RNA sequence: GGGAACGACUCGAGUAGAGUCGAAAAGAUAUGGAUUCGUACAAAGAGCGAAGAACGUGGGUCACAGAUACCGUCGGAAACGACGGUAUUCACAGCCCACGGGAGCUCAUAAAGCGAAUCCUAAGUCCCUAAUAAAUAACUUCGGUUAUUUAUUAGGAAAAGAAACAACAACAACAAC
Reactivity to 2A3 in 0.01 (KOAc 150mM, MgCl2 10mM, bicine 150mM(pH8.5), 24C), signal-to-noise 3, nucleotides 027 to 126: g010a020u050a040u100g010g000a000u000u010c000g020u120a090c210a160a300a060g020a000g010c020g290a300a020g000a030a020c010g000u010g000g000g020u150c090a060c010a210g010a000u000a000c000c000g020u000c020g010g000a040a020a000c010g010a000c000g000g010u000a000u010u010c000a000c000a000g030c050c000c020a000c020g000g000g000a000g000c000u050c020a030u170a020a090a020g030c010g000a010a000u020c000c010u000a030a000g020u000c010
Reactivity to DMS in 0.01 (KOAc 150mM, MgCl2 10mM, bicine 150mM(pH8.5), 24C), signal-to-noise 3, nucleotides 027 to 126: g020a080u010a110u000g000g010a000u000u010c010g050u010a060c240a150a180a230g010a040g030c000g030a110a150g020a100a210c000g010u000g010g010g020u010c060a240c240a300g000a020u000a000c000c000g010u000c000g010g000a020a030a100c000g020a010c010g010g000u000a000u000u000c040a170c300a300g000c000c000c000a010c000g000g000g000a040g010c020u020c000a010u000a070a130a240g000c000g000a020a010u000c000c010u000a030a110g000u000c020
Chemical mapping of a 177-nucleotide RNA with 2A3 and DMS. 2A3 adducts were read by reverse transcription with SuperScript II with manganese. The 2A3 profile rests on 5,831 reads. Reactivities are rounded to 0.1 and cut off at 0 and 3. DMS (dimethyl sulfate) methylates the pairing face of unpaired adenines and cytosines.